[RMDB]
RNA sequence: GGGAACGACUCGAGUAGAGUCGAAAAGUAAAGGCGAGUGAGAAGAUCACAGAAUGCCAAAAGCACGCUUAGAAACGGACAUCUGUGAGCAAAAGUGCACGCAAUAAGCGAAAGAUGCCGAAAAAAAGAUAACUACAGAAUUCGUUCUGUAGUUAUCAAAAGAAACAACAACAACAAC
Reactivity to DMS in 0.01 (KOAc 150mM, MgCl2 10mM, bicine 150mM(pH8.5), 24C), signal-to-noise 7, nucleotides 027 to 126: g010u010a060a090a110g000g010c020g010a100g020u000g010a040g000a120a100g000a130u000c010a010c000a060g010a090a070u010g010c010c020a040a070a090a170g000c030a070c040g010c030u000u010a070g010a090a080a080c060g000g000a040c030a010u000c020u000g000u000g000a160g010c090a030a050a060a140g000u000g010c200a110c070g000c040a070a110u000a070a100g010c010g000a070a090a070g000a070u000g010c020c010g000a010a010a050a060a070a070a080
Reactivity to 2A3 in 0.01 (KOAc 150mM, MgCl2 10mM, bicine 150mM(pH8.5), 24C), signal-to-noise 5, nucleotides 027 to 126: g040u050a040a100a020g020g000c030g020a040g020u050g020a040g010a160a080g040a070u020c000a000c010a030g150a080a050u130g000c010c000a040a040a010a000g010c020a010c040g020c030u090u080a050g080a060a120a010c030g010g070a030c000a010u000c010u040g100u070g070a020g020c020a020a050a110a080g120u070g050c030a020c030g020c010a020a250u140a280a040g010c000g030a100a040a000g020a020u030g000c010c030g050a090a040a000a000a010a000a000